Chemical mapping of a 177-nucleotide RNA with 2A3 and DMS. For 2A3 the reverse transcriptase was SuperScript II with manganese. Source: RMDB library RFM100, as collected in RNAgym. The RNA was probed in 150 mM KOAc, 10 mM MgCl2 and 150 mM bicine (pH 8.5) at 24 C. For 2A3, 2,385 sequencing reads were counted.
RNA sequence: GGGAACGACUCGAGUAGAGUCGAAAACCAAAUCCGUUUAAGAAUGACGGCAAACGGCCUGGACGUUCGGCAAUCUUCACCAAUACUGAGGAUUACUGGUGUGCGGCGUAUCCCCCAAGCGCCCCGCAACAGUGGUCACUUUCGAGUGACCACUGUUAAAAGAAACAACAACAACAAC
Reactivity to 2A3 in 0.01 (KOAc 150mM, MgCl2 10mM, bicine 150mM(pH8.5), 24C), signal-to-noise 4, nucleotides 027 to 126: c000c010a040a000a000u080c000c020g030u020u050u060a170a120g100a120a090u170g020a040c010g000g000c030a100a080a000c050g050g000c030c030u020g000g060a040c010g050u070u080c020g070g000c020a010a020u010c020u070u020c030a040c020c070a070a120u170a190c050u010g020a020g070g040a070u000u070a070c040u030g000g000u030g040u050g100c070g010g000c010g030u010a140u110c000c000c000c000c000a030a020g000c020g010c000c000c000c030g030c010
Reactivity to DMS in 0.01 (KOAc 150mM, MgCl2 10mM, bicine 150mM(pH8.5), 24C), signal-to-noise 3, nucleotides 027 to 126: c000c000a050a090a120u030c120c050g000u000u040u040a070a110g050a080a100u030g010a020c000g010g020c300a060a150a100c120g000g030c050c060u000g010g000a050c060g000u020u010c100g000g000c070a050a010u030c000u000u020c020a060c070c050a020a040u050a080c300u020g000a030g000g000a000u010u020a030c050u000g010g030u000g020u000g010c300g000g000c030g010u000a090u020c030c000c000c030c070a040a140g000c020g000c030c010c010c010g020c040